[RMDB]
RNA sequence: GGGAACGACUCGAGUAGAGUCGAAAAGUGGUAGCUGAUUUUGUGGACACACCUAGUGGACCUGUUCCCAUCCCCCGCUCAACUACUCAGGUAGUGGUUCGCGGCAACGGGUACACCGCAGUUGGUAACAAGCUUGUCGAUGGCGUCAAGACGAUCAUACAAUAACCCAAUUCGUUGGGUUAUUGUAAAAAGAAACAACAACAACAAC
Reactivity to 2A3 in 0.01 (KOAc 150mM, MgCl2 10mM, bicine 150mM(pH8.5), 24C), signal-to-noise 3, nucleotides 027 to 156: g100u020g020g060u070a030g010c020u030g060a110u060u060u110u100g060u090g040g050a020c030a010c010a020c060c040u040a040g030u100g010g030a060c010c060u040g030u060u070c000c000c000a080u100c010c000c000c000c000g000c030u070c030a010a020c000u020a000c000u030c050a080g220g060u070a020g090u030g010g030u050u080c070g000c000g040g000c010a060a050c100g000g000g000u040a050c030a010c000c020g020c000a040g030u060u070g040g010u000a030a010c010a050a020g030c020u070u050g020u050c020g050a090u090g030g030c030g030u060c030a010a000g020a030c040g050a080u090c040a050
Reactivity to DMS in 0.01 (KOAc 150mM, MgCl2 10mM, bicine 150mM(pH8.5), 24C), signal-to-noise 4, nucleotides 027 to 156: g000u000g030g020u000a080g030c030u000g020a120u000u000u000u000g030u000g010g010a140c060a080c060a100c040c020u000a110g010u020g010g010a070c040c020u000g030u000u000c020c000c050a240u000c020c010c030c040c020g010c020u000c040a070a020c010u000a010c010u010c080a270g020g020u000a030g030u000g010g030u010u000c090g000c020g020g010c090a070a030c040g010g020g010u010a080c050a070c030c010g010c020a130g010u000u000g020g010u020a060a100c070a080a120g000c040u000u000g020u000c040g010a120u000g020g010c050g000u010c060a050a120g010a100c040g010a100u010c050a300